[RMDB]
RNA sequence: GGGAACGACUCGAGUAGAGUCGAAAAGGGUUACCGUUCGCGGUAACCCAAAUAAAAUCAGCGGUAAGCUCCCGUAAAAAAUUACCGCUGAACGGGAGCUUAAAAUCGAUGUGUUCGCACAUCGAAAGAUGAAUAUUUACUUCGGUAAAUAUUCAUCAAAAGAAACAACAACAACAAC
Reactivity to DMS in 0.01 (KOAc 150mM, MgCl2 10mM, bicine 150mM(pH8.5), 24C), signal-to-noise 2, nucleotides 027 to 126: g000g000g020u000u010a010c010c000g020u000u010c190g010c000g010g000u000a010a000c000c000c010a000a010a030u000a040a070a110a120u000c040a010g010c050g000g000u000a030a030g030c090u000c000c000c000g000u000a000a060a060a090a090a120u010u010a050c050c040g020c040u000g020a050a010c040g000g000g010a080g010c020u000u010a030a040a090a100u010c000g000a000u000g010u000g010u000u000c200g010c010a020c010a000u000c000g020a020a030a060
Reactivity to 2A3 in 0.01 (KOAc 150mM, MgCl2 10mM, bicine 150mM(pH8.5), 24C), signal-to-noise 2, nucleotides 027 to 126: g000g000g010u000u000a000c010c010g000u000u040c280g000c010g080g000u000a000a020c000c000c000a010a010a000u020a000a020a010a070u060c030a010g020c010g070g030u040a030a000g020c010u000c030c000c000g010u040a060a080a010a040a020a160u090u040a030c010c010g000c010u010g010a000a000c000g010g010g010a010g000c020u060u070a070a100a030a080u030c000g000a000u000g010u000g020u040u050c170g040c040a000c000a010u000c000g000a020a010a000